[RMDB]
Structure probing data (DMS and 2A3) for a 177-nucleotide construct. Values cover nucleotides 27 to 126.
RNA sequence: GGGAACGACUCGAGUAGAGUCGAAAAAGAAAUAGCCAUAAUCGUAAGAGAAAUGUCCUUCACAUAGCGCUACGCACAGAACUAUUAGUAGCGCAAUAGCUAUUGAAGGACAUUACCUGCCAAAAAAGUGAUAUAUUACGUUCGCGUAAUAUAUCACAAAAGAAACAACAACAACAAC
Reactivity to DMS in 0.01 (KOAc 150mM, MgCl2 10mM, bicine 150mM(pH8.5), 24C), signal-to-noise 4, nucleotides 027 to 126: a090g020a070a050a070u000a070g020c040c030a110u000a070a080u010c110g010u000a080a040g010a090g010a070a040a020u000g000u000c000c000u000u000c020a020c300a010u000a030g000c000g010c050u000a010c000g000c100a080c130a110g000a040a100c210u010a100u010u000a080g000u000a060g000c000g000c060a040a040u010a080g010c060u000a020u010u000g000a010a000g000g000a010c000a000u000u000a070c060c030u000g020c030c150a000a030a060a050a070a080
Reactivity to 2A3 in 0.01 (KOAc 150mM, MgCl2 10mM, bicine 150mM(pH8.5), 24C), signal-to-noise 2, nucleotides 027 to 126: a000g130a000a110a030u070a010g040c020c030a060u160a050a060u110c040g060u050a060a090g050a000g020a110a050a040u000g010u000c000c030u000u040c000a050c010a030u060a010g030c000g000c020u030a000c000g010c030a050c020a160g220a300a060c090u080a150u280u120a070g030u000a010g000c000g020c010a000a030u020a000g010c010u020a020u080u010g000a000a000g000g000a000c000a000u010u010a010c010c010u030g070c050c000a160a300a160a040a090a190
The reactions ran in a buffer of 150 mM KOAc, 10 mM MgCl2 and 150 mM bicine (pH 8.5), at 24 C.